[RMDB]
RNA sequence: GGGAACGACUCGAGUAGAGUCGAAAAUGAGCAGGUUGAAGUUUAGCGAAAGCUAGAUGGAGGACCGAACCAGUUCUGAUGUGCAAAUCGUUUGGAUGACUUGGGUAUAGGGGUUAAAGGCUAAUCUAGUACUACUGUAAUUCGUUACAGUAGUACUAAAAGAAACAACAACAACAAC
Reactivity to 2A3 in 0.01 (KOAc 150mM, MgCl2 10mM, bicine 150mM(pH8.5), 24C), signal-to-noise 9, nucleotides 027 to 126: u190g010a020g060c100a030g030g000u050u040g030a050a020g010u020u010u020a010g000c020g040a130a020a010g000c000u010a000g000a040u040g010g040a050g090g110a000c010c010g010a010a020c010c010a020g010u070u040c050u070g070a090u060g030u050g040c050a030a040a100u080c060g030u040u080u100g080g010a060u060g020a060c050u060u080g030g010g020u090a080u100a140g030g020g000g000u030u100a090a050a020g070g000c050u050a050a030u050c020u020
Reactivity to DMS in 0.01 (KOAc 150mM, MgCl2 10mM, bicine 150mM(pH8.5), 24C), signal-to-noise 9, nucleotides 027 to 126: u020g010a080g030c110a150g010g020u000u010g000a290a200g000u000u000u000a010g000c010g000a110a100a170g010c000u000a000g000a010u010g000g010a240g010g010a030c020c010g010a090a130c070c050a080g010u010u000c040u010g010a060u010g010u010g010c120a050a070a060u010c080g010u010u000u000g010g000a080u010g000a060c080u000u000g010g010g000u010a080u010a070g000g000g000g010u010u010a040a060a070g010g010c070u010a050a090u020c100u000